[RMDB]
RNA sequence: GGGAACGACUCGAGUAGAGUCGAAAAGUGGUCGAGUGCGAAGCACUGGGGUAGAGAAAUAAAGAGAUAGAGAUCUACCCCGUCAGUCAGUCACUCUCUGUCUGAAUCUCUCUCUCAAAGACCACGAAGUGAUCACGUGGUUCGCCACGUGAUCACUAAAAGAAACAACAACAACAAC
Reactivity to DMS in 0.01 (KOAc 150mM, MgCl2 10mM, bicine 150mM(pH8.5), 24C), signal-to-noise 2, nucleotides 027 to 126: g060u000g020g110u000c030g010a050g000u030g030c020g020a090a130g000c030a000c070u000g020g000g010g010u000a000g000a020g000a060a140a130u040a090a090a150g000a020g000a110u000a010g000a060g000a100u010c030u010a080c010c010c000c050g000u000c080a000g010u000c050a110g000u020c110a060c200u070c100u080c000u000g010u000c030u000g000a050a060u000c080u010c010u010c020u000c030u000c000a050a110a220g000a010c010c040a000c060g000a050
Reactivity to 2A3 in 0.01 (KOAc 150mM, MgCl2 10mM, bicine 150mM(pH8.5), 24C), signal-to-noise 1, nucleotides 027 to 126: g000u000g000g020u000c010g060a000g010u010g020c060g180a150a120g020c080a000c020u060g010g010g010g000u000a010g020a000g110a060a130a050u280a170a280a000g110a000g030a040u100a070g120a000g000a030u040c000u010a000c000c000c020c000g000u010c000a010g000u000c000a000g020u050c080a040c220u080c020u000c000u000g000u050c000u000g030a030a030u040c010u000c010u000c010u000c000u030c040a070a030a000g000a000c000c000a010c000g000a050